[RMDB]
RNA sequence: GGGAACGACUCGAGUAGAGUCGAAAAUAGCAGCUUAACACAAGGAAGAUUGAUUUUCUUACGGUUCUGGAGGUUACAGGCCUGACACAGACUCACCUGGCUACAAUCCAGCUGUCACCGGGGCUGUGUUGCUUUCAGGACGCUCUAGGGGACAGUCCACCUUGCGUGGAUUCGUCCACGCAAGGUGAAAAGAAACAACAACAACAAC
Reactivity to 2A3 in 0.01 (KOAc 150mM, MgCl2 10mM, bicine 150mM(pH8.5), 24C), signal-to-noise 1, nucleotides 027 to 156: u150a030g040c020a000g010c020u080u040a040a020c030a000c020a050a000g040g060a030a020g040a090u060u090g080a120u050u010u080u070c030u050u050a030c060g040g010u030u040c010u000g040g000a010g000g000u050u050a020c000a020g020g020c000c000u090g030a020c040a000c010a180g060a040c000u080c060a060c020c000u020g000g040c010u120a100c050a020a090u120c000c000a010g000c020u030g000u000c030a040c050c080g000g000g030g000c020u010g030u020g050u190u050g020c000u000u000u070c010a010g000g010a010c020g020c000u030c020u040a060g000g000g020g020a000c020a060g020u060c000

The record gives the reactivity of an RNA of 207 nucleotides to 2A3.
It was measured as part of the RMDB library OK3TST.
Values cover nucleotides 27 to 156.